An RNA of 177 nucleotides, treated with 2A3 and DMS and read out base by base. The 2A3 profile rests on 1,470 reads. Conditions: 150 mM KOAc, 10 mM MgCl2 and 150 mM bicine (pH 8.5), 24 C. For DMS the reverse transcriptase was MarathonRT. The DMS profile rests on 1,654 reads.

[RMDB]
RNA sequence: GGGAACGACUCGAGUAGAGUCGAAAAGUAGUCGAACCAGUCGCGAUGAUAGUAAGAACGGAUUUCGCCGUCCUGGCUCCACAAAUAGCUCCCCGCCGGGAACUCUUUAAUCGUGCGGCAAACUGGCGCCUUGAUAACGAUUCGUCGUUAUCAAGGCAAAAGAAACAACAACAACAAC
Reactivity to 2A3 in 0.01 (KOAc 150mM, MgCl2 10mM, bicine 150mM(pH8.5), 24C), signal-to-noise 2, nucleotides 027 to 126: g090u110a000g050u060c040g030a020a060c000c010a000g040u040c000g000c050g090a060u070g040a040u070a070g180u100a040a080g020a120a050c050g040g000a050u080u210u110c120g050c070c000g070u060c020c010u000g000g000c000u000c070c030a060c040a070a270a100u160a120g050c000u050c020c000c000c000g000c000c000g000g030g020a060a040c030u000c000u150u070u050a070a040u010c010g010u030g050c030g020g010c000a060a000a040c030u010g020g000c010
Reactivity to DMS in 0.01 (KOAc 150mM, MgCl2 10mM, bicine 150mM(pH8.5), 24C), signal-to-noise 3, nucleotides 027 to 126: g030u000a070g010u010c060g010a090a120c030c030a090g010u010c050g030c020g000a090u010g010a070u010a080g000u020a070a060g010a080a250c040g000g000a200u010u010u000c260g010c010c020g010u000c020c010u000g000g000c050u000c070c070a040c100a050a070a110u000a090g010c050u000c020c010c020c080g020c100c110g020g000g000a040a060c050u000c060u000u000u000a110a060u000c060g000u010g010c060g010g000c070a010a110a020c110u000g000g010c300